[RMDB]
RNA sequence: GGGAACGACUCGAGUAGAGUCGAAAAACUGGAGUUACGACUCCAGAAGGCUUUGGAGUCUAAGGAAAUUAGGUCGGAUACAUACGAAUUAGUGUGUUUGCGACGCUGUCUUCGUGAUCAAGCCUAAGCCCUUCAAAAUAUUCGUAUUUUGAAGGGCAAAAGAAACAACAACAACAAC
Reactivity to 2A3 in 0.01 (KOAc 150mM, MgCl2 10mM, bicine 150mM(pH8.5), 24C), signal-to-noise 9, nucleotides 027 to 126: a000c010u010g010g000a010g000u030u090a080c160g050a030c060u010c000c000a020g020a020a020g020g000c040u140u100u190g070g030a110g040u030c020u040a020a030g090g020a070a070a100u190u200a130g020g000u000c010g030g070a010u000a020c000a000u010a000c010g080a220a190u170u100a240g000u010g000u010g000u020u020u040g130c010g000a000c010g000c040u000g000u010c000u020u030c030g040u030g030a060u050c010a010a010g000c000c000u020a060a050
Reactivity to DMS in 0.01 (KOAc 150mM, MgCl2 10mM, bicine 150mM(pH8.5), 24C), signal-to-noise 4, nucleotides 027 to 126: a120c000u000g000g000a020g000u010u020a100c200g020a090c000u000c000c000a000g000a130a030g020g000c010u000u020u020g010g010a110g020u010c010u000a080a060g010g000a010a040a060u040u040a030g010g000u000c000g000g000a010u000a000c010a010u000a000c000g010a150a140u020u010a100g010u000g020u000g010u000u000u010g000c000g000a010c000g020c000u010g000u000c020u000u000c080g020u000g020a090u000c040a030a010g010c000c000u000a120a170